[RMDB]
RNA sequence: GGGAACGACUCGAGUAGAGUCGAAAAGUAUGGAUGCCACCGUGACGGCUCAAUCACACAAGUGCCAACGAUAACGAGGCGCUCGCUAUUGCUGCGUAUCUGACGGCCUGACGGUCUGACGUUACAAAAAACGAAAAGUGGUUCGCCACUUUUCGAACCUCAACAGAUUCUUCGGAAUCUGUUGAGGAAAAGAAACAACAACAACAAC
Reactivity to 2A3 in 0.01 (KOAc 150mM, MgCl2 10mM, bicine 150mM(pH8.5), 24C), signal-to-noise 1, nucleotides 027 to 156: g080u000a030u230g060g030a020u050g030c000c030a040c000c040g070u070g030a070c100g000g000c050u090c130a050a120u240c010a020c000a000c010a180a000g030u000g050c000c020a010a060c160g040a100u120a140a010c100g020a100g050g060c030g040c070u090c000g060c020u040a090u230u250g000c070u070g020c010g000u020a090u020c060u060g040a030c090g020g020c000c020u100g100a020c010g000g010u000c030u040g040a040c030g000u030u030a030c090a040a130a060a020a000a000c000g010a000a000a000a000g000u010g040g020u010u000c090g030c090c000a000c000u000u010u000u000c000g000a020a000